Chemical mapping of a 177-nucleotide RNA with DMS and 2A3. Values are in units of 0.01, from 0 to 300, in steps of 10. Values cover nucleotides 27 to 126. 2A3 is a SHAPE reagent: it acylates the 2'-hydroxyl of flexible nucleotides of all four kinds.
[RMDB]
RNA sequence: GGGAACGACUCGAGUAGAGUCGAAAAUACAAAGAUGCCUCCAACGGCUGCUUUGCACUUCCACCUCCUGGCCCUCUGGGAGCGAAAGAAGCAACAUGAACAUUAAGUACUGUGGCCUGUUGGCAUGCCACCUUGGAAUAUUCGUAUUCCAAGGUGGAAAAGAAACAACAACAACAAC
Reactivity to DMS in 0.01 (KOAc 150mM, MgCl2 10mM, bicine 150mM(pH8.5), 24C), signal-to-noise 5, nucleotides 027 to 126: u020a130c100a060a070a050g010a090u000g010c020c020u010c090c130a070a090c170g020g000c010u000g020c020u000u000u000g010c070a170c030u000u010c020c060a200c300c010u000c020c000u000g010g000c150c070c300u010c020u010g000g010g020a030g020c080g000a040a080a050g000a080a050g030c080a050a050c150a090u010g000a090a060c100a080u010u020a060a110g010u010a060c100u000g000u000g010g040c000c010u010g000u000u000g010g010c150a030u000g000
Reactivity to 2A3 in 0.01 (KOAc 150mM, MgCl2 10mM, bicine 150mM(pH8.5), 24C), signal-to-noise 2, nucleotides 027 to 126: u120a020c030a020a070a000g090a060u040g020c000c020u000c050c030a130a060c060g000g000c010u010g010c010u030u020u080g000c040a040c030u030u000c010c010a030c000c000u020c000c010u010g030g000c040c030c030u250c030u040g000g010g010a010g000c030g060a110a070a020g040a040a010g020c030a030a080c020a150u160g090a100a020c030a110u170u200a190a020g060u070a040c050u040g010u010g030g000c000c030u040g030u070u010g000g000c000a010u050g020